Chemical mapping of a 177-nucleotide RNA with 2A3 and DMS.
For DMS the reverse transcriptase was MarathonRT.
The reactions ran in a buffer of 150 mM KOAc, 10 mM MgCl2 and 150 mM bicine (pH 8.5), at 24 C.
For DMS, 486 sequencing reads were counted.
It was measured as part of the RMDB library OK2TST.

[RMDB]
RNA sequence: GGGAACGACUCGAGUAGAGUCGAAAAUCAUCCUCAUCCAAGACACUGUAAGAGCCAUCUGUCUUCUUUUUGCGGACAGGAAUAAAGAAGUCCCAACAGUCCAAUAGAGGCUUACGCAAUGAGGGAAGGUACUCAGCUGAUUCGUCAGCUGAGUACCAAAAGAAACAACAACAACAAC
Reactivity to 2A3 in 0.01 (KOAc 150mM, MgCl2 10mM, bicine 150mM(pH8.5), 24C), signal-to-noise 1, nucleotides 027 to 126: u110c000a040u080c010c010u010c010a000u050c010c010a130a010g050a030c030a010c140u020g090u170a120a070g010a030g100c040c070a140u040c020u020g030u020c020u080u050c020u100u240u040u180u110g030c030g000g000a020c030a030g030g090a000a030u110a030a050a030g140a050a000g080u000c030c000c000a000a120c010a010g050u030c060c030a040a010u160a130g060a030g000g050c000u000u000a020c080g080c020a050a000u030g000a030g060g040g010a030a120
Reactivity to DMS in 0.01 (KOAc 150mM, MgCl2 10mM, bicine 150mM(pH8.5), 24C), signal-to-noise 1, nucleotides 027 to 126: u000c040a190u000c000c000u000c090a080u000c230c110a020a030g030a120c070a140c120u000g020u010a070a230g000a070g010c090c050a240u010c040u000g000u030c050u000u000c010u000u030u000u000u000g050c110g010g000a030c050a020g000g000a110a060u000a140a040a250g050a070a110g000u000c000c000c000a030a130c120a030g000u000c080c060a060a190u000a090g000a120g040g000c000u000u000a110c170g010c070a080a000u000g000a110g020g000g000a040a090